[RMDB]
RNA sequence: GGGAACGACUCGAGUAGAGUCGAAAAUCGUCGUCGACGAAGGCUGGUAAGCAGUAAGCCGGACGGAGCCCUCGCGGCUGAUCCUCUGGAGCUCUGCUCUACGAUCUUCGCUGCUGAGGCCCGCGACGCCGCUUCCCGCCGCUAGUCGAGCGGACGUACUAAGAAUGCUCUUCGGAGCAUUCUUAGUAAAAGAAACAACAACAACAAC
Reactivity to 2A3 in 0.01 (KOAc 150mM, MgCl2 10mM, bicine 150mM(pH8.5), 24C), signal-to-noise 3, nucleotides 027 to 156: u080c020g050u000c000g020u040c020g000a010c020g010a050a010g000g000c060u090g010g100u180a030a020g050c050a060g080u120a070a060g030c000c010g010g000a050c000g010g040a090g020c100c000c000u000c000g010c010g020g000c000u000g000a000u000c000c000u020c010u010g000g010a000g000c010u040c300u300g110c000u000c000u160a010c230g000a000u000c000u090u110c170g000c020u020g010c110u160g010a000g000g000c010c000c000g020c020g000a020c010g030c000c000g000c010u000u000c000c000c000g010c030c010g070c260u100a060g030u040c020g040a070g300c030g070g010a000c000g000u000
Reactivity to DMS in 0.01 (KOAc 150mM, MgCl2 10mM, bicine 150mM(pH8.5), 24C), signal-to-noise 1, nucleotides 027 to 156: u010c020g000u000c010g020u000c010g040a060c010g030a170a300g000g000c020u020g050g010u010a020a100g040c010a050g060u000a130a070g130c000c020g010g000a220c040g000g020a180g010c060c000c000u010c200g010c000g060g000c020u000g010a010u000c010c010u010c020u000g000g000a080g020c020u010c180u030g020c010u010c010u010a010c170g010a100u000c030u020u010c190g000c020u010g010c020u050g000a100g020g010c000c010c030g010c030g000a070c020g010c020c200g000c030u010u000c050c000c020g020c010c010g100c010u000a160g010u020c010g000a160g010c030g020g000a090c030g010u010
Chemical mapping of a 207-nucleotide RNA with 2A3 and DMS. It was measured as part of the RMDB library VIROID. The 2A3 profile rests on 1,846 reads. The RNA was probed in 150 mM KOAc, 10 mM MgCl2 and 150 mM bicine (pH 8.5) at 24 C.